[RMDB]
RNA sequence: GGGAACGACUCGAGUAGAGUCGAAAAGUUGAAGUGUUCGCACUUCAACAAACGCUCAACUCAUGGAGCGCAAGACGAAUAGCUACAUAUUCGACAUGAGUAAAAGACUGUAGUUCGCUACAGUCAAGUUUAUCCUCUCCUUCGGGAGAGGAUAAACAAAAGAAACAACAACAACAAC
Reactivity to 2A3 in 0.01 (KOAc 150mM, MgCl2 10mM, bicine 150mM(pH8.5), 24C), signal-to-noise 2, nucleotides 027 to 126: g000u000u000g000a000a030g000u000g020u020u100c150g010c060a000c010u000u000c000a000a010c010a000a020a000c010g000c000u000c000a030a030c000u000c010a000u010g010g000a000g000c040g000c180a150a010g110a060c000g010a010a000u000a000g040c050u130a100c110a240u040a020u030u000c000g010a000c010a010u010g000a010g010u040a050a040a010a020g000a010c010u020g010u020a010g020u000u070c270g000c070u000a010c000a000g000u000c000a000a000
Reactivity to DMS in 0.01 (KOAc 150mM, MgCl2 10mM, bicine 150mM(pH8.5), 24C), signal-to-noise 1, nucleotides 027 to 126: g010u000u010g000a010a000g030u000g000u000u000c290g020c030a010c010u010u010c000a020a010c000a050a130a090c030g000c010u000c000a110a010c000u000c010a000u020g000g000a000g000c000g010c100a130a090g000a080c000g000a020a010u000a010g000c230u000a170c250a120u000a010u000u000c010g010a130c000a000u000g000a010g000u000a150a100a110a030g000a000c000u000g010u010a010g010u000u010c300g010c000u000a020c000a010g010u000c000a050a010
Source: RMDB library M2PK50, as collected in RNAgym. This 177-nucleotide RNA was probed chemically with 2A3 and DMS. 2A3 adducts were read by reverse transcription with SuperScript II with manganese. For DMS, 1,005 sequencing reads were counted. The 2A3 profile rests on 2,202 reads. The reactions ran in a buffer of 150 mM KOAc, 10 mM MgCl2 and 150 mM bicine (pH 8.5), at 24 C.